[RMDB]
RNA sequence: GGGAACGACUCGAGUAGAGUCGAAAAGAUAUGGACAUCUGUGUGGAGAGCACGGGUCGGAAACGACCCUAUGCUCUAUGAAGCACUGAUGUCCUAAGUCAAACAAGCACGCUUCGGCGUGCUUGAAGUAAGUCUUGAUCUUCGGAUCAAGACUUACAAAAGAAACAACAACAACAAC
Reactivity to DMS in 0.01 (KOAc 150mM, MgCl2 10mM, bicine 150mM(pH8.5), 24C), signal-to-noise 1, nucleotides 027 to 126: g000a090u010a280u000g020g020a040c000a000u000c000u000g030u000g000u000g000g000a110g010a000g020c000a060c300g000g000g020u020c000g020g020a050a090a150c000g000a020c010c000c000u000a040u000g010c000u000c000u010a010u000g000a190a280g030c010a010c000u000g010a000u000g000u000c010c000u020a000a080g000u000c020a150a110a300c020a000a000g000c000a040c000g040c000u000u020c300g000g030c010g020u010g000c010u000u000g000a010a180
Chemical mapping of a 177-nucleotide RNA with DMS.
The DMS profile rests on 877 reads.
It was measured as part of the RMDB library TTRDES.
For DMS the reverse transcriptase was MarathonRT.
DMS (dimethyl sulfate) methylates the pairing face of unpaired adenines and cytosines.